About this RNA
The record gives the reactivity of an RNA of 177 nucleotides to DMS and 2A3. The RNA was probed in 150 mM KOAc, 10 mM MgCl2 and 150 mM bicine (pH 8.5) at 24 C. The DMS profile rests on 28,962 reads. 2A3 adducts were read by reverse transcription with SuperScript II with manganese. It was measured as part of the RMDB library OK1LIB. Reactivities are given for positions 27 through 126.

RNA sequence: GGGAACGACUCGAGUAGAGUCGAAAAAGACUGAUUAACGCAUUAAAUUCAGCAUGAUAUUACAGGAUUUAAUCUGAUAUCAGUUCGAUAUCUUGCCGGACCGAGACGUUGAUUAAAGCGUCUUUAAGAAUAUGUCAUAUUUCGAUAUGACAUAUUCAAAAGAAACAACAACAACAAC
Reactivity to DMS in 0.01 (KOAc 150mM, MgCl2 10mM, bicine 150mM(pH8.5), 24C), signal-to-noise 9, nucleotides 027 to 126: a110g010a040c010u000g000a020u000u010a120a220c200g000c210a010u000u000a010a030a010u000u000c000a110g020c140a090u020g010a140u030a080u010u040a090c100a100g010g000a020u000u000u000a010a010u000c020u000g000a160u020a020u000c010a010g000u010u010c050g010a100u030a040u010c080u000u010g020c040c020g000g000a070c100c090g000a030g000a020c020g030u010u000g010a150u030u040a060a090a100g000c110g000u000c000u000u000u020a060a090
Reactivity to 2A3 in 0.01 (KOAc 150mM, MgCl2 10mM, bicine 150mM(pH8.5), 24C), signal-to-noise 9, nucleotides 027 to 126: a000g030a000c010u010g000a010u040u050a100a030c060g010c060a010u010u020a000a010a010u020u010c010a030g090c060a120u110g140a080u150a090u220u210a100c090a080g010g010a010u000u010u020a010a020u000c010u020g030a020u020a000u140c000a010g020u050u010c010g010a010u010a070u110c050u020u080g080c020c010g030g040a040c020c050g000a010g000a010c010g020u040u030g120a250u140u300a160a130a010g020c010g000u000c000u000u020u010a050a000